Chemical mapping of a 177-nucleotide RNA with 2A3. The RNA was probed in 150 mM KOAc, 10 mM MgCl2 and 150 mM bicine (pH 8.5) at 24 C.
[RMDB]
RNA sequence: GGGAACGACUCGAGUAGAGUCGAAAAUGGGAGGUAAACACCUACGGAAAUUAAUGAUUUUGACUAUUGUAUAUCAUUACCAAGACUCUAAACAUGGUAAAGGUAACUCUUCGUGAAACUAGCGUCGGCCAGGGGUAUCGUUCGCGAUACCCCUGGCAAAAGAAACAACAACAACAAC
Reactivity to 2A3 in 0.01 (KOAc 150mM, MgCl2 10mM, bicine 150mM(pH8.5), 24C), signal-to-noise 1, nucleotides 027 to 126: u120g000g050g040a040g000g160u190a000a250a040c070a030c000c030u040a120c040g140g070a000a150a000u210u000a090a040u120g070a000u000u000u140u070g180a120c070u130a140u300u300g000u030a130u000a000u000c070a070u010u010a000c000c000a000a000g000a260c000u090c120u300a050a060a120c040a000u100g050g060u030a080a080a080g080g000u000a000a000c010u000c100u300u240c000g000u000g080a030a010a000c040u070a040g000c070g120u000c000g000